[RMDB]
RNA sequence: GGGAACGACUCGAGUAGAGUCGAAAAAGUAAAGCAUUUUUAGGAAAGCACUUUUCCUUAUGUGUCUAAUAUUUGGGAACUGCAUAGGAGAACAGUUUAAUAGGAACCCUGAUAUUGACAGUAAGAUAUAUUCUUAAUGUAGUAACCAGACCCAGGAGAUCGUGCUUUUAUUCGUAAAAGCACGAUCAAAAGAAACAACAACAACAAC
Reactivity to 2A3 in 0.01 (KOAc 150mM, MgCl2 10mM, bicine 150mM(pH8.5), 24C), signal-to-noise 1, nucleotides 027 to 156: a000g080u080a100a000a000g000c020a000u020u040u040u160u280a020g000g020a000a020a000g010c050a050c220u000u030u030u040c000c000u020u020a060u060g130u020g000u000c060u100a040a050u030a140u070u110u110g000g010g010a000a020c020u030g010c020a100u180a220g180g000a090g140a100a000c000a000g060u080u060u170a180a180u210a060g170g000a050a080c010c000c000u000g000a000u030a010u030u050g000a000c000a000g030u040a000a000g050a010u030a030u060a100u300u000c020u000u100a070a070u000g000u020a050g020u020a020a020c000c000a030g020a060c000c000c050a000g100g090a120